An RNA of 177 nucleotides, treated with 2A3 and read out base by base.
The reactions ran in a buffer of 150 mM KOAc, 10 mM MgCl2 and 150 mM bicine (pH 8.5), at 24 C.
For 2A3, 687 sequencing reads were counted.
Source: RMDB library RFM100, as collected in RNAgym.

RNA sequence: GGGAACGACUCGAGUAGAGUCGAAAAUUAACUUUGGAUAUAUGUGCCUUGCUAUGAACGCGUUCAUUUUUAAGUGACCGGACCCUAAAAUAUUCAGGUAGCAUGACGGAAGCUAUGAAUUAAUCCUGUUACAACCGAACUUCGGUUCGGUUGUAACAAAAGAAACAACAACAACAAC
Reactivity to 2A3 in 0.01 (KOAc 150mM, MgCl2 10mM, bicine 150mM(pH8.5), 24C), signal-to-noise 1, nucleotides 027 to 126: u150u070a080a000c040u050u190u230g000g040a030u080a000u000a000u230g060u060g030c000c000u000u150g000c080u070a000u070g060a080a000c000g000c040g110u010u010c030a030u060u000u020u080u270a100a000g000u000g070a000c000c000g050g050a100c000c000c000u150a120a110a010a100u240a080u160u130c020a020g030g010u000a000g030c010a030u060g030a000c000g000g010a080a000g000c040u150a060u180g000a000a000u000u110a050a100u040c000c000u040